RNA sequence: GGGAACGACUCGAGUAGAGUCGAAAACGGAGACAUUAAUGUUAUAGCUCAGCACUACAAGCUUAAUAUAAUUCUGAAAACUGAUCGUGAUGUUCAAGUCAUGAAAUACGAUUCUGGAUGUGACAGCGUAAAGAGGCUUCUUCGGAAGCCUCUUUACAAAAGAAACAACAACAACAAC
Reactivity to DMS in 0.01 (KOAc 150mM, MgCl2 10mM, bicine 150mM(pH8.5), 24C), signal-to-noise 1, nucleotides 027 to 126: c080g010g010a100g000a150c200a070u000u000a130a100u010g000u000u010a160u000a070g000c030u040c110a100g000c080a020c090u000a060c210a160a070g000c000u000u000a000a090u000a040u000a070a030u000u000c030u020g000a040a040a070a280c020u000g060a120u000c000g070u000g010a060u000g040u000u010c210a090a080g040u000c070a000u010g000a020a000a020u010a170c120g000a080u000u000c150u000g020g000a080u000g000u010g000a170c180a040g000c080